[RMDB]
RNA sequence: GGGAACGACUCGAGUAGAGUCGAAAAUGGUGGUCUCUGGCAAAUUGGUCCGUAAUUGGGCUAGAAGGGUGCCUGGGUUUGCCGCAGGUUGCCUGGGAGGGUCCCAUAGCGGGUGGGUGCCUGGUGGCGAUAUAUUUUUAUUCGUAAAAAUAUAUCGAAAAGAAACAACAACAACAAC
Reactivity to 2A3 in 0.01 (KOAc 150mM, MgCl2 10mM, bicine 150mM(pH8.5), 24C), signal-to-noise 7, nucleotides 027 to 126: u120g040g010u040g020g040u000c020u000c020u080g030g000c020a020a070a160u120u090g040g000u020c010c010g020u050a050a120u150u200g010g000g000c010u020a040g050a070a050g060g010g020u050g010c000c000u020g040g010g010u080u130u180g110c020c010g090c030a000g020g000u150u250g020c000c010u020g000g000g040a150g020g030g010u030c010c000c010a030u060a020g040c050g020g060g080u130g010g010g020u060g020c010c010u040g050g030u070g030g030
Reactivity to DMS in 0.01 (KOAc 150mM, MgCl2 10mM, bicine 150mM(pH8.5), 24C), signal-to-noise 6, nucleotides 027 to 126: u030g010g020u010g010g010u000c030u010c030u000g010g010c040a040a060a110u030u010g010g010u010c010c010g020u000a090a130u040u080g000g000g010c010u000a040g010a120a180g000g010g020u000g000c030c010u000g000g000g010u010u030u020g020c050c020g010c080a030g000g020u000u030g040c010c010u000g000g000g000a110g000g010g000u010c020c000c000a100u020a080g010c100g000g000g010u030g000g000g010u010g010c030c030u000g000g010u010g000g010
Description
This 177-nucleotide RNA was probed chemically with 2A3 and DMS. It was measured as part of the RMDB library OK1LIB. For 2A3, 7,272 sequencing reads were counted. Conditions: 150 mM KOAc, 10 mM MgCl2 and 150 mM bicine (pH 8.5), 24 C.